[RMDB]
RNA sequence: GGGAACGACUCGAGUAGAGUCGAAAACAGGCACAGCGUGAGGCUGGCUUCACAGAGCAGCGAUCACUGCCCGCUUCCAUCGGUGGAAGGAUAACAGGCUGCUGCACCUUGGGCCCGCUUCUGGCCCAGAGUCCCUCUACAACAGACCACCAUCUUUCUACUAAAAGUUGUUCGCAACUUUUAGUAGAAAAGAAACAACAACAACAAC
Reactivity to 2A3 in 0.01 (KOAc 150mM, MgCl2 10mM, bicine 150mM(pH8.5), 24C), signal-to-noise 4, nucleotides 027 to 156: c030a020g030g030c030a020c020a250g050c090g080u100g070a060g040g040c010u030g010g050c000u190u090c080a100c030a020g040a000g030c000a000g020c000g080a090u150c060a040c160u090g010c010c010c020g050c020u040u020c030c030a110u150c120g250g020u090g010g030a030a050g010g010a030u060a120a050c030a040g030g000c010u020g000c010u000g010c070a080c020c030u020u020g000g000g000c030c010c020g100c050u100u000c030u090g020g010c000c000c000a020g010a010g010u010c000c010c000u050c020u080a110c030a170a010c020a040g070a060c000c020a020c000c010a100u010c020u000u030u010
The record gives the reactivity of an RNA of 207 nucleotides to 2A3. Reactivities are given for positions 27 through 156.